RNA sequence: GGGAACGACUCGAGUAGAGUCGAAAAGGGGUCAGCCAGGACAGGCCCACGCUUUUGACGCUCUGAAGCCUCCACGGAGCGAUAAGCGUGGGAACUACCUGUUCAUCUGGCUGACGGAGGCACCCAAAACACAUAAAACCUUCGGGUUUUAUGUGAACUGUUAGGUUUAGUUCGCUAAACCUAACAGAAAAGAAACAACAACAACAAC
Reactivity to DMS in 0.01 (KOAc 150mM, MgCl2 10mM, bicine 150mM(pH8.5), 24C), signal-to-noise 2, nucleotides 027 to 156: g000g020g030g000u000c010a020g040c000c000a140g010g000a050c020a020g020g020c010c000c010a000c000g020c000u000u000u000u030g020a220c080g020c010u010c000u000g010a020a040g010c060c000u000c000c040a300c050g020g000a070g010c030g080a080u000a020a060g040c020g040u000g100g000g020a020a020c040u000a300c040c030u000g000u000u000c050a110u000c020u030g010g060c020u000g010a010c030g050g020a030g040g000c040a210c010c000c000a110a060a140a230c020a010c000a000u000a010a020a030a020c000c000u000u000c300g080g090g020u000u000u020u000a000u000g010u000g010a020a180
Reactivity to 2A3 in 0.01 (KOAc 150mM, MgCl2 10mM, bicine 150mM(pH8.5), 24C), signal-to-noise 4, nucleotides 027 to 156: g050g000g030g000u010c000a000g020c000c000a010g010g000a010c010a000g000g010c000c010c000a000c000g020c010u160u210u200u200g120a080c040g000c000u000c000u010g050a170a050g010c010c000u010c010c010a010c010g010g000a000g020c010g060a080u110a140a030g000c000g000u000g010g000g010a010a010c000u110a040c000c000u000g020u060u030c020a120u050c040u020g000g000c000u000g010a000c000g000g000a000g000g020c010a050c000c000c010a010a120a040a010c000a000c000a010u020a000a000a000a000c020c030u130u150c300g010g020g000u020u000u000u000a000u000g000u000g000a020a050